[RMDB]
RNA sequence: GGGAACGACUCGAGUAGAGUCGAAAAGCUGACCGCCGCACUGCCCACCGACGCGGGGGUCUACGUGUGCCGCGCCCGCAACGCGGCCGGCGAGGCCUACGCGGCGGCCGCCGUCACCGUGCUGGAGAGCGGCUAGUACAUUCGUGUACUAGCCGCUAAAAGAAACAACAACAACAAC
Reactivity to DMS in 0.01 (KOAc 150mM, MgCl2 10mM, bicine 150mM(pH8.5), 24C), signal-to-noise 1, nucleotides 027 to 126: g040c020u000g000a020c030c010g000c060c020g030c030a190c120u020g000c000c040c050a250c050c020g010a070c120g000c000g020g000g010g020g040u000c010u010a030c020g020u010g000u040g030c010c030g010c010g000c030c020c300g000c110a050a180c020g010c000g000g020c010c010g010g030c050g000a140g000g010c000c020u020a090c120g030c020g020g000c040g000g030c040c070g020c020c040g030u000c050a060c100c050g030u000g050c010u000g020g020a180g000
Source: RMDB library OK2TRN, as collected in RNAgym. This 177-nucleotide RNA was probed chemically with DMS. The reactions ran in a buffer of 150 mM KOAc, 10 mM MgCl2 and 150 mM bicine (pH 8.5), at 24 C.